[RMDB]
RNA sequence: GGGAACGACUCGAGUAGAGUCGAAAACAGUGAAAGGAGAGGUCAGCGUCAGCAGCCCGCCGCUGAACGCAGGACAACGCCAAAAGUCGGCGGGAAAAGAUACAGGCUGAAGAUACAGCCAGUACAAGAUACGAGGCGUAUUCGUACGCCUCGUAUCAAAAGAAACAACAACAACAAC
Reactivity to DMS in 0.01 (KOAc 150mM, MgCl2 10mM, bicine 150mM(pH8.5), 24C), signal-to-noise 2, nucleotides 027 to 126: c050a180g110u000g000a070a060a010g010g030a030g000a130g020g020u010c020a100g000c000g000u000c000a030g000c010a060g040c000c020c000g000c010c000g000c000u000g000a030a080c060g030c010a070g050g000a110c040a090a070c090g000c080c040a170a010a190a140g010u020c130g030g080c020g000g000g000a070a040a120a160g020a190u000a000c010a020g000g040c000u000g000a080a070g000a220u040a070c000a000g000c010c000a010g030u020a020c130a150a050
Reactivity to 2A3 in 0.01 (KOAc 150mM, MgCl2 10mM, bicine 150mM(pH8.5), 24C), signal-to-noise 3, nucleotides 027 to 126: c040a000g080u110g210a090a060a050g040g050a130g040a100g010g050u010c010a000g000c000g020u030c000a000g000c010a000g000c000c000c000g000c000c020g000c000u010g010a050a000c000g030c000a010g130g100a010c020a170a040c120g040c030c020a090a150a040a000g270u230c050g000g010c010g000g000g000a010a030a010a000g050a010u060a010c040a010g000g000c000u010g000a080a010g040a110u130a070c000a000g000c000c010a000g000u010a000c010a020a060